[RMDB]
An RNA of 177 nucleotides, treated with DMS and 2A3 and read out base by base. DMS (dimethyl sulfate) methylates the pairing face of unpaired adenines and cytosines. DMS adducts were read by reverse transcription with MarathonRT. Conditions: 150 mM KOAc, 10 mM MgCl2 and 150 mM bicine (pH 8.5), 24 C. The data come from the RNA Mapping Database (RMDB), library M2PK50. For DMS, 1,815 sequencing reads were counted.
RNA sequence: GGGAACGACUCGAGUAGAGUCGAAAAGCAGGAGUGUUCGCACUCCUGCAAAUGAAUGCGGCCAGCUCCAGGCCGCCAAACAAUAUGGAGCACAAAGUAAAGAAAGGCCUACGUUCGCGUAGGCCAACACCAUGCAUAAGUUCGCUUAUGCAUGGUGAAAAGAAACAACAACAACAAC
Reactivity to DMS in 0.01 (KOAc 150mM, MgCl2 10mM, bicine 150mM(pH8.5), 24C), signal-to-noise 2, nucleotides 027 to 126: g010c000a000g020g010a030g030u010g000u000u010c230g000c010a020c000u000c000c010u000g010c000a010a020a060u000g040a080a100u010g010c020g020g000c000c000a070g010c000u000c010c000a010g000g010c000c010g020c000c080a030a010a050c160a000a040u000a040u000g010g000a010g030c020a230c190a050a040a080g030u010a110a070a130g020a060a150a060g000g010c000c000u000a010c000g000u000u000c210g010c020g000u000a000g010g000c020c000a000a030
Reactivity to 2A3 in 0.01 (KOAc 150mM, MgCl2 10mM, bicine 150mM(pH8.5), 24C), signal-to-noise 2, nucleotides 027 to 126: g000c000a000g000g000a000g020u040g010u020u150c160g060c090a010c000u020c000c000u000g000c000a000a000a000u040g010a070a160u300g000c000g000g020c010c030a040g000c000u030c000c000a010g000g000c010c010g000c010c010a030a100a020c030a000a020u000a020u030g020g000a000g060c000a000c000a010a010a010g140u240a170a030a010g110a080a150a030g010g010c000c010u020a030c010g010u020u050c210g020c010g070u000a010g070g000c010c000a000a000